[RMDB]
RNA sequence: GGGAACGACUCGAGUAGAGUCGAAAAAGCACUUACGAGUGCAAUGGAUGAUGAAACGAUGGUAUCUGAAUGAGCAAAUUAUUGUUGAGAAGCCUUUUACCAUCUGCUGCCUUCCUUCUGAUCGGAAUCCGUAUAAUAUAUUCGUAUAUUAUACGGAAAAAGAAACAACAACAACAAC
Reactivity to 2A3 in 0.01 (KOAc 150mM, MgCl2 10mM, bicine 150mM(pH8.5), 24C), signal-to-noise 9, nucleotides 027 to 126: a000g010c000a010c010u040u050a040c230g080a010g010u000g000c000a000a040u100g020g020a030u050g010a050u070g040a090a100a030c060g010a020u020g010g000u020a020u030c020u040g080a160a090u150g020a080g040c030a060a060a050u210u100a170u120u210g080u080u130g060a080g030a130a040g030c000c000u020u020u020u020a020c010c010a010u000c020u040g030c040u060g010c010c000u010u030c030c000u040u110c050u080g110a160u110c060g030g060a060a070
Reactivity to DMS in 0.01 (KOAc 150mM, MgCl2 10mM, bicine 150mM(pH8.5), 24C), signal-to-noise 9, nucleotides 027 to 126: a100g010c010a010c000u010u010a100c150g030a040g020u000g010c010a090a060u010g000g000a060u010g000a100u010g010a090a080a120c120g000a020u000g000g010u000a030u000c050u010g010a080a080u010g010a090g000c050a030a040a100u020u010a090u020u010g010u010u010g000a100g000a090a160g000c140c010u000u000u010u000a030c010c000a020u000c020u010g010c080u000g000c040c010u000u000c010c010u000u010c070u010g000a110u000c060g000g000a200a140
The record gives the reactivity of an RNA of 177 nucleotides to 2A3 and DMS. 2A3 adducts were read by reverse transcription with SuperScript II with manganese. Conditions: 150 mM KOAc, 10 mM MgCl2 and 150 mM bicine (pH 8.5), 24 C.